[RMDB]
RNA sequence: GGGAACGACUCGAGUAGAGUCGAAAAGGCUCCCACUUCGGUGGGAGCCAAAGCUGAACGCGCAGCAAGCGAUAAACAUGGAAAAACGCACGUCCAAUGCGCAAAGCUUCCCCUUCGGGGGAAGCAACUCGAGAGUAAUGUUCGCAUUACUCUCGAGAAAAGAAACAACAACAACAAC
Reactivity to DMS in 0.01 (KOAc 150mM, MgCl2 10mM, bicine 150mM(pH8.5), 24C), signal-to-noise 1, nucleotides 027 to 126: g030g050c000u030c000c000c000a000c010u000u030c110g010g030u000g000g000g020a000g010c040c000a000a000a150g000c010u010g010a050a220c160g010c020g000c000a020g000c110a190a080g000c000g010a100u000a020a100a090c120a210u000g000g010a140a020a070a090a020c120g030c020a030c120g000u000c030c010a020a070u000g010c000g000c090a130a060a190g000c000u000u000c000c000c000c000u000u020c180g020g070g060g000g030a000a000g000c000a020a070
Reactivity to 2A3 in 0.01 (KOAc 150mM, MgCl2 10mM, bicine 150mM(pH8.5), 24C), signal-to-noise 1, nucleotides 027 to 126: g000g000c000u000c050c010c000a000c030u040u060c260g130g030u010g000g020g030a010g020c000c000a000a000a000g000c000u010g030a070a010c090g000c000g000c020a010g000c020a060a030g010c020g020a040u130a110a240a060c060a120u190g130g000a180a040a000a000a010c070g040c050a040c010g030u020c010c010a040a020u060g030c040g000c020a070a000a070g000c000u010u020c000c000c000c000u000u030c170g060g000g000g000g000a010a000g000c000a010a010
The record gives the reactivity of an RNA of 177 nucleotides to DMS and 2A3. The reactions ran in a buffer of 150 mM KOAc, 10 mM MgCl2 and 150 mM bicine (pH 8.5), at 24 C. Source: RMDB library M2PK50, as collected in RNAgym.